The data come from the RNA Mapping Database (RMDB), library OK3TST. This 207-nucleotide RNA was probed chemically with DMS and 2A3. The DMS profile rests on 3,265 reads. For DMS the reverse transcriptase was MarathonRT.
[RMDB]
RNA sequence: GGGAACGACUCGAGUAGAGUCGAAAAGAGUUCGUGACCGACGACGACUGGUGGCUGUCCGCGGCGGUCCUGUCCAUGUCGUUGAUGACGCGCGACGGGAUUACCGAAGUGAUGGAAUCGGCGCGGCUGCGCGACGCCGAGAAGCGGGGUCAGGAGACUACUUACUAACGUUCGCGUUAGUAAGUAGAAAAGAAACAACAACAACAAC
Reactivity to DMS in 0.01 (KOAc 150mM, MgCl2 10mM, bicine 150mM(pH8.5), 24C), signal-to-noise 1, nucleotides 027 to 156: g010a090g020u010u000c010g030u000g010a200c000c010g010a120c040g030a070c020g010a200c020u010g020g030u030g020g030c000u000g020u000c000c070g000c060g030g050c000g000g000u010c010c020u020g020u000c010c000a200u010g040u000c000g000u000u010g020a150u030g010a070c000g050c050g010c090g000a060c000g030g010g000a060u000u000a060c030c000g000a060a110g040u010g030a090u000g020g010a100a130u000c000g020g000c010g000c000g010g020c010u000g000c000g040c000g010a060c000g010c010c000g010a110g010a050a090g000c030g030g020g030g010u000c000a110g000g010a110g010a260
Reactivity to 2A3 in 0.01 (KOAc 150mM, MgCl2 10mM, bicine 150mM(pH8.5), 24C), signal-to-noise 4, nucleotides 027 to 156: g070a010g020u100u120c050g040u100g030a040c020c010g080a110c030g030a030c010g040a050c110u080g080g000u050g080g000c040u070g020u100c010c000g000c020g030g040c050g000g020u040c010c010u040g010u000c030c010a080u190g050u050c060g030u070u200g110a190u270g020a030c040g060c020g040c080g030a030c000g000g000g020a040u050u090a050c030c030g070a110a070g060u130g130a110u130g030g080a100a070u040c010g030g000c030g040c000g090g030c020u050g000c000g030c080g040a030c020g000c000c010g040a030g000a020a000g000c000g020g010g010g000u020c020a010g070g050a030g020a010